[RMDB]
RNA sequence: GGGAACGACUCGAGUAGAGUCGAAAACUUUGCGGUGACUGCAGUAAAUCGAAGUACGAGUCAUGCGAGACGCUCCUCGAAUGACCAACAGUGCGCAGGCUAUCAAUUGAAUUGGAGCGUAUGCACAACGUUUUAGGCCGUUCGCGGCCUAAAACGUAAAAGAAACAACAACAACAAC
Reactivity to 2A3 in 0.01 (KOAc 150mM, MgCl2 10mM, bicine 150mM(pH8.5), 24C), signal-to-noise 2, nucleotides 027 to 126: c020u010u010u080g000c000g000g000u180g080a080c020u020g010c000a110g040u080a040a140a220u220c060g060a150a010g180u100a040c020g010a000g000u000c010a010u030g000c000g000a060g060a070c100g000c100u030c070c020u000c000g060a120a000u100g010a040c030c080a100a120c000a040g150u080g020c060g000c020a020g170g010c000u020a000u300c030a010a080u030u240g100a020a110u060u030g010g000a000g000c040g000u090a000u030g000c010a020c000a050
Reactivity to DMS in 0.01 (KOAc 150mM, MgCl2 10mM, bicine 150mM(pH8.5), 24C), signal-to-noise 1, nucleotides 027 to 126: c050u000u000u000g000c000g050g030u000g000a000c030u000g010c210a140g000u000a000a000a090u030c170g000a210a070g000u000a010c000g000a110g000u080c050a000u000g010c010g010a080g000a140c200g000c000u000c000c000u000c000g000a070a030u000g000a000c090c070a090a090c240a060g000u000g040c000g020c300a110g010g000c000u000a000u070c030a000a040u010u040g000a100a300u050u000g000g010a040g000c000g010u020a000u070g030c030a050c050a120